[RMDB]
RNA sequence: GGGAACGACUCGAGUAGAGUCGAAAAGAUAUGGAUUCAUGCAAGCGUGCAAUGGCCGUUGAAAGCUCAGUUUCGGAAACGAAACUGAGCUGGAGGCUGACACGUGAUGACCAUGAAUCCUAAGUCACCUCUUCUAAGAGUUCGCUCUUAGAAGAGGAAAAGAAACAACAACAACAAC
Reactivity to 2A3 in 0.01 (KOAc 150mM, MgCl2 10mM, bicine 150mM(pH8.5), 24C), signal-to-noise 2, nucleotides 027 to 126: g030a000u090a070u200g000g000a010u000u000c000a000u010g000c010a120a300g000c010g060u000g000c070a210a300u300g040g000c020c010g110u200u040g040a030a010a010g000c000u020c000a000g000u010u000u000c030g000g030a100a090a080c020g010a000a000a010c010u000g000a000g020c000u000g000g000a010g010g010c000u040g120a040c000a000c030g000u000g100a200u180g020a040c070c000a000u010g000a020a000u000c000c000u030a160a010g010u010c020a050
Reactivity to DMS in 0.01 (KOAc 150mM, MgCl2 10mM, bicine 150mM(pH8.5), 24C), signal-to-noise 4, nucleotides 027 to 126: g000a020u000a300u000g000g020a010u000u010c020a000u000g000c050a100a240g010c010g010u000g030c110a220a160u030g010g030c000c000g010u010u000g000a290a140a040g000c000u000c000a000g010u000u000u000c000g000g000a120a060a220c000g000a000a000a010c000u000g010a000g020c000u000g010g010a060g010g020c000u000g020a080c020a000c010g020u000g010a030u000g010a180c300c000a000u000g010a030a000u010c000c000u010a010a130g000u010c050a120
Source: RMDB library TTRINS, as collected in RNAgym. Structure probing data (2A3 and DMS) for a 177-nucleotide construct. The DMS profile rests on 2,648 reads.